Structure probing data (2A3) for a 207-nucleotide construct. 2A3 adducts were read by reverse transcription with SuperScript II with manganese.
RNA sequence: GGGAACGACUCGAGUAGAGUCGAAAAGGGGUCGGUCCUCGGGCUUAAGGGAGCCAAUGUGGCUGAAGCCUCCACGGCCACGAUGGCAUCGAUCUUAAGUCUCUAGCGUGGGACCGACGGAGGCACCCAAACGCAUCAGCUGUUCGCAGCUGAUGCGCGUUGCGAUAUCGUUCGCGAUAUCGCAACGAAAAGAAACAACAACAACAAC
Reactivity to 2A3 in 0.01 (KOAc 150mM, MgCl2 10mM, bicine 150mM(pH8.5), 24C), signal-to-noise 1, nucleotides 027 to 156: g130g040g000g010u020c010g000g010u030c010c010u050c110g030g000g030c010u000u000a000a000g020g010g000a030g010c000c030a000a060u300g000u020g000g010c010u010g010a100a020g010c010c010u010c000c000a030c000g000g000c000c000a000c010g120a120u050g000g000c000a100u300c110g010a010u000c000u000u010a000a000g020u000c020u050c140u240a080g190c090g080u200g020g000g020a000c000c000g000a000c000g000g000a010g000g000c000a040c000c000c000a040a130a000c010g000c000a030u010c000a000g050c000u030g130u070u270c300g000c110a000g000c020u030g010a000u000g000c010g000